[RMDB]
The record gives the reactivity of an RNA of 177 nucleotides to 2A3 and DMS. Reactivities are given for positions 27 through 126. The reactions ran in a buffer of 150 mM KOAc, 10 mM MgCl2 and 150 mM bicine (pH 8.5), at 24 C. For 2A3 the reverse transcriptase was SuperScript II with manganese. For DMS, 1,046 sequencing reads were counted. The 2A3 profile rests on 2,693 reads.
RNA sequence: GGGAACGACUCGAGUAGAGUCGAAAACUAUUGACAACUGUAGCCGACCAAGUGCAGAUCGUCGACGUCAAAUUCCCCACGACAUCGAUUCGACGACAUCGGUCAGGAACUUUGUCCACUGCACUCGGACGCAUAUCACGUUCGCGUGAUAUGCGUCAAAAGAAACAACAACAACAAC
Reactivity to 2A3 in 0.01 (KOAc 150mM, MgCl2 10mM, bicine 150mM(pH8.5), 24C), signal-to-noise 4, nucleotides 027 to 126: c050u060a070u150u170g020a030c040a110a050c150u060g020u150a030g040c000c000g010a030c020c030a100a070g050u050g090c030a030g040a210u010c000g010u000c030g010a030c030g040u010c030a010a030a190u040u050c000c000c000c000a050c050g060a020c000a040u140c090g060a110u080u000c020g000a010c000g000a000c030a060u120c080g050g040u010c030a110g030g060a050a050c040u090u090u060g040u020c060c010a040c060u010g010c030a000c020u050c040g040
Reactivity to DMS in 0.01 (KOAc 150mM, MgCl2 10mM, bicine 150mM(pH8.5), 24C), signal-to-noise 1, nucleotides 027 to 126: c050u000a100u000u000g000a010c110a110a050c060u010g040u000a060g000c000c040g070a000c100c050a140a150g020u060g040c070a070g000a220u040c030g090u000c020g080a090c150g120u020c000a080a000a090u000u000c000c000c000c060a040c190g000a010c090a060u000c100g010a050u000u030c100g080a150c080g150a060c230a040u000c130g000g130u000c000a140g000g030a050a140c140u000u000u000g000u000c030c020a010c090u000g030c000a050c000u000c040g000